Structure probing data (2A3 and DMS) for a 177-nucleotide construct. It was measured as part of the RMDB library OK1LIB. The reactions ran in a buffer of 150 mM KOAc, 10 mM MgCl2 and 150 mM bicine (pH 8.5), at 24 C. For DMS, 950 sequencing reads were counted. For DMS the reverse transcriptase was MarathonRT.
[RMDB]
RNA sequence: GGGAACGACUCGAGUAGAGUCGAAAAAGACAUCAAUAUACACAGCUGUGAAUUUAGCAUGUUCUUUAUAGGCAGCACGUCUUGCUUCUCGUAUGACCCGUUCGUUAUAAAUACUGCCGCUGAUAGCUCGUGCUUGGACAUUCGUGUCCAAGCACGAAAAAGAAACAACAACAACAAC
Reactivity to 2A3 in 0.01 (KOAc 150mM, MgCl2 10mM, bicine 150mM(pH8.5), 24C), signal-to-noise 2, nucleotides 027 to 126: a000g030a020c010a000u130c060a140a000u100a000u030a160c030a000c030a060g170c060u100g080u050g030a080a060u040u120u180a090g000c180a070u070g000u000u180c000u000u020u000a060u020a010g190g070c030a000g030c020a000c020g020u000c030u040u110g030c000u000u030c000u020c050g040u080a050u130g090a050c050c000c000g020u010u050c010g000u180u100a060u020a160a160a000u150a130c030u030g030c040c000g000c000u050g090a040u140a080g000c000
Reactivity to DMS in 0.01 (KOAc 150mM, MgCl2 10mM, bicine 150mM(pH8.5), 24C), signal-to-noise 1, nucleotides 027 to 126: a010g000a030c060a000u100c060a200a040u070a020u000a130c050a000c280a300g040c120u030g000u000g000a230a070u000u000u000a100g000c060a030u000g030u080u000c040u000u000u000a000u050a210g000g030c000a060g020c050a040c220g000u000c000u000u000g010c000u020u000c140u000c090g000u000a050u000g000a130c000c080c000g000u000u000c000g000u000u000a300u000a100a100a100u000a170c090u000g000c000c000g030c040u000g000a140u000a130g000c150